RNA sequence: GGGAACGACUCGAGUAGAGUCGAAAAAGUCUCAAGUUCGCUUGAGACUCGGCCGAUAUGGAGUGGUGGUUGAGCUGACAUUUCGGAAACGAAAUGCCAGCAAUGAUGCCACGUAACAUCUCCUAAGUCUAUUCAGGGAGGAAUUCGUUCCUCCCAAUAGUUUUAUCUAAUUCGUUAGAUAAAACUAAAAAGAAACAACAACAACAAC
Reactivity to 2A3 in 0.01 (KOAc 150mM, MgCl2 10mM, bicine 150mM(pH8.5), 24C), signal-to-noise 2, nucleotides 027 to 156: a000g000u010c000u000c000a000a000g030u060u160c260g010c140u000u000g000a000g010a000c000u000c010g070g050c050c050g000a010u000a020u050g010g000a000g030u100g030g030u000g010g010u090u020g020a010g000c000u000g000a000c000a000u020u000u000c000g000g000a000a010a000c000g000a000a000a000u000g000c000c000a000g000c010a000a090u010g000a000u000g010c020c000a020c010g000u040a060a020c030a090u070c000u000c010c000u000a010a000g000u000c040u070a160u160u230c150a090g000g000g000a000g010g000a010a020u060u070c190g020u050u000c010c000u010c040c010c060a000a010
Reactivity to DMS in 0.01 (KOAc 150mM, MgCl2 10mM, bicine 150mM(pH8.5), 24C), signal-to-noise 3, nucleotides 027 to 156: a030g020u000c010u000c000a000a020g030u010u000c300g050c020u000u000g010a020g000a010c010u000c000g010g020c160c050g020a200u000a110u000g000g000a020g040u000g040g010u010g000g000u010u000g000a040g030c000u000g000a000c010a010u000u010u000c000g010g010a170a090a210c010g000a010a010a010u000g000c000c000a010g010c000a020a020u010g000a070u010g000c010c000a010c020g030u010a060a120c120a120u010c000u010c000c020u010a070a090g000u000c020u000a110u000u000c130a180g010g010g000a040g010g000a050a060u000u000c110g000u000u000c000c000u000c000c000c000a000a010
The data come from the RNA Mapping Database (RMDB), library RNAMAK.
An RNA of 207 nucleotides, treated with 2A3 and DMS and read out base by base.
The DMS profile rests on 9,917 reads.